Chemical mapping of a 207-nucleotide RNA with DMS and 2A3. Source: RMDB library RNAMAK, as collected in RNAgym. 2A3 adducts were read by reverse transcription with SuperScript II with manganese. The reactions ran in a buffer of 150 mM KOAc, 10 mM MgCl2 and 150 mM bicine (pH 8.5), at 24 C.

[RMDB]
RNA sequence: GGGAACGACUCGAGUAGAGUCGAAAAGCGUAUUCGUACGCAAAACUCCGUAGGAAGAGGACACCUAUGAAGAACGCUACCCACCUGUCUUUCGAAAGAGAGACAGAGGCGUUUGGAGGUGUCUCUUCCUAAACGGCAUAGUGGUGUUCGCACCAAAUCUAUUGAGGACAUUCGUGUCCUCAAUAGAAAAAGAAACAACAACAACAAC
Reactivity to DMS in 0.01 (KOAc 150mM, MgCl2 10mM, bicine 150mM(pH8.5), 24C), signal-to-noise 2, nucleotides 027 to 156: g030c020g040u000a040u010u000c270g070u000a010c000g000c000a070a070a040a160c060u000c000c020g030u000a020g000g000a050a030g000a030g010g030a030c000a010c000c000u000a200u010g000a200a300g020a000a020c020g010c020u000a040c020c010c030a300c190c000u000g020u000c010u020u000u000c000g000a200a130a290g000a030g000a010g010a030c000a010g000a060g020g000c000g020u000u020u010g040g000a060g030g030u000g000u000c000u000c000u000u010c000c000u000a040a000a060c000g010g000c210a040u000a100g020u000g000g000u000g030u000u000c090g000c050a070c030c000a040a070a160
Reactivity to 2A3 in 0.01 (KOAc 150mM, MgCl2 10mM, bicine 150mM(pH8.5), 24C), signal-to-noise 3, nucleotides 027 to 156: g020c000g000u020a040u070u210c250g030u050a010c000g020c000a010a030a030a150c040u020c000c000g010u030a020g030g000a000a010g030a060g130g180a050c010a010c000c030u210a300u270g050a030a020g020a010a000c000g000c020u070a150c030c050c040a050c020c010u000g000u000c000u020u010u000c010g020a070a060a020g000a000g000a000g000a000c000a000g000a000g000g000c000g000u000u000u020g040g010a010g010g000u010g000u000c000u000c000u000u000c000c000u000a010a000a000c020g020g000c090a090u090a220g110u090g050g000u050g040u100u110c190g000c080a020c010c010a000a070a070